[RMDB]
RNA sequence: GGGAACGACUCGAGUAGAGUCGAAAAGAUUCCUCGUUGUUGAGCGAGGUUUAAACAAAUCGACCACACAAACGUAGAGCCGACUACGGAUUUAUAAAUUAAGGCAUUAAGUGUGAUAAGGAAACAAAAAACGAUGUUGUGUUCGCACAACAUCGAAGUACGAUAUGGUCUUCGGACCAUAUCGUACAAAAGAAACAACAACAACAAC
Reactivity to DMS in 0.01 (KOAc 150mM, MgCl2 10mM, bicine 150mM(pH8.5), 24C), signal-to-noise 2, nucleotides 027 to 156: g030a300u000u010c000c000u000c010g000u000u000g040u000u000g000a090g000c030g000a070g010g010u010u000u000a070a160a210c070a080a040a110u010c030g020a040c070c020a060c010a190c030a140a120a090c000g000u020a030g000a110g020c060c010g050a090c030u010a070c030g010g000a200u010u000u000a090u000a040a020a050u000u000a010a040g010g040c010a240u000u010a060a090g030u000g010u010g000a130u000a050a060g010g020a070a040a170c050a000a040a040a120a060a270c000g020a030u000g020u000u000g010u000g000u010u000c300g000c000a040c000a010a010c000a000u000c000g010a010a070
Reactivity to 2A3 in 0.01 (KOAc 150mM, MgCl2 10mM, bicine 150mM(pH8.5), 24C), signal-to-noise 4, nucleotides 027 to 156: g130a080u160u110c000c000u000c000g000u000u020g020u000u010g000a000g000c010g000a000g020g020u040u100u050a030a020a010c100a000a010a030u000c000g000a000c000c000a000c000a000c000a020a140a000c020g000u000a000g000a010g010c010c000g060a040c010u000a000c000g000g010a020u050u300u010a170u130a060a020a010u080u120a010a000g000g010c000a010u130u270a210a130g000u000g000u020g020a030u040a030a040g110g010a070a050a060c080a070a120a060a040a010a010c000g000a000u000g000u010u010g000u000g030u050u050c130g060c060a000c000a000a000c000a010u000c000g000a000a000